RNA sequence: GGGAACGACUCGAGUAGAGUCGAAAAGCUCUGGGAGACAGAUCGAACAACAAAGAGAGAUCGAAAAUCUUAGGGGAGAGAACGAAUCUGUCGUCUUCUCUAGGACAUUGUCGAUCAGAUGUCCAAAGUCCAUUCAUUGGUUCGCCAAUGAAUGGGCAAAAGAAACAACAACAACAAC
Reactivity to DMS in 0.01 (KOAc 150mM, MgCl2 10mM, bicine 150mM(pH8.5), 24C), signal-to-noise 9, nucleotides 027 to 126: g010c060u000c010u000g010g000g000a300g000a030c030a070g000a020u000c010g010a290a160c050a060a110c300a080a130a090g000a070g000a300g010a020u000c000g000a070a090a110a200u000c010u000u000a010g010g000g000g000a000g000a090g000a070a070c010g000a070a110u040c170u030g000u000c040g000u000c000u010u000c000u000c000u010a010g000g010a010c090a080u030u020g010u000c000g000a300u030c000a030g000a050u020g000u020c020c030a070a090a100
Reactivity to 2A3 in 0.01 (KOAc 150mM, MgCl2 10mM, bicine 150mM(pH8.5), 24C), signal-to-noise 7, nucleotides 027 to 126: g010c010u000c000u000g010g000g000a020g000a000c010a010g010a020u010c010g020a050a030c020a040a030c030a030a300a010g130a020g010a000g000a010u010c010g020a020a040a020a060u000c000u000u000a010g010g000g030g000a010g010a000g030a080a030c030g030a100a160u190c160u210g140u060c040g110u000c000u010u000c000u000c000u000a000g010g000a010c030a110u090u130g030u010c010g000a010u030c000a000g020a030u070g030u000c010c010a040a030a010
Structure probing data (DMS and 2A3) for a 177-nucleotide construct.
For DMS the reverse transcriptase was MarathonRT.
The data come from the RNA Mapping Database (RMDB), library OK1LIB.